[RMDB]
RNA sequence: GGGAACGACUCGAGUAGAGUCGAAAACUCAGCCACCAGGACCCAUCGGUACGGCCAGGUGAUGAUUUCUUCCGUUACACCAAUGGCAGGUGGCUCGACACUUUCGAGUUGCCUGCGGAUCGCAGCAGGAGGUAGGUAAAUUCGUUUACCUACCUCCAAAAGAAACAACAACAACAAC
Reactivity to 2A3 in 0.01 (KOAc 150mM, MgCl2 10mM, bicine 150mM(pH8.5), 24C), signal-to-noise 3, nucleotides 027 to 126: c010u020c020a020g070c030c010a040c010c020a030g030g110a280c010c020c030a070u080c080g050g010u110a060c050g040g000c020c000a030g020g030u010g030a140u040g030a070u080u090u040c030u080u040c020c020g070u070u080a070c060a030c030c020a100a090u080g130g000c000a010g000g010u020g010g000c000u000c000g010a000c020a040c150u170u220u030c000g000a000g000u020u010g000c000c000u000g000c030g020g010a050u130c060g000c070a080g000c040a040
Reactivity to DMS in 0.01 (KOAc 150mM, MgCl2 10mM, bicine 150mM(pH8.5), 24C), signal-to-noise 7, nucleotides 027 to 126: c110u010c070a110g010c070c010a030c020c020a120g020g010a120c090c030c060a110u000c100g010g020u000a080c160g000g010c040c050a060g030g020u010g000a090u000g000a080u000u000u010c060u010u010c060c040g000u000u000a070c080a090c040c050a140a080u010g010g020c000a020g010g020u000g000g010c000u010c000g000a040c300a150c270u000u000u000c000g000a010g010u000u000g000c010c010u000g020c010g010g000a050u010c090g010c080a070g000c140a190